Chemical mapping of a 177-nucleotide RNA with DMS and 2A3. The DMS profile rests on 21,047 reads.
RNA sequence: GGGAACGACUCGAGUAGAGUCGAAAAGAUAUGGAGUUGUCGAUAAGGCUUGUUCGGAAACGAACAAAGGCCUUUUGACGACACUCCUAAGUCAAAAGAUGGGUCUAAGUUCGCUUAGACCCAUCAACAAUACAGUAUGCUUCGGCAUACUGUAUUGAAAAGAAACAACAACAACAAC
Reactivity to DMS in 0.01 (KOAc 150mM, MgCl2 10mM, bicine 150mM(pH8.5), 24C), signal-to-noise 9, nucleotides 027 to 126: g010a030u000a300u010g000g010a020g000u010u010g020u000c000g020a140u010a020a010g010g020c000u000u000g010u000u000c000g010g000a080a050a160c000g010a010a000c000a010a040a100g020g010c000c000u000u000u000u010g010a190c080g000a020c000a020c000u000c000c000u000a020a100g000u000c020a080a080a110a120g000a010u000g000g000g010u000c000u000a010a010g010u000u020c250g010c000u000u000a000g000a000c000c000c000a000u000c000a040a110
Reactivity to 2A3 in 0.01 (KOAc 150mM, MgCl2 10mM, bicine 150mM(pH8.5), 24C), signal-to-noise 5, nucleotides 027 to 126: g020a020u060a040u110g020g000a010g020u270u120g000u110c010g010a070u030a220a020g010g000c020u030u010g000u010u000c000g020g010a060a050a050c010g000a010a000c030a020a080a030g220g010c000c010u030u030u020u040g060a040c000g000a000c010a000c010u010c000c000u000a030a010g030u030c040a020a000a030a190g000a000u000g010g030g000u000c000u000a010a000g020u050u140c270g090c200u000u000a000g000a000c000c000c000a000u000c000a000a000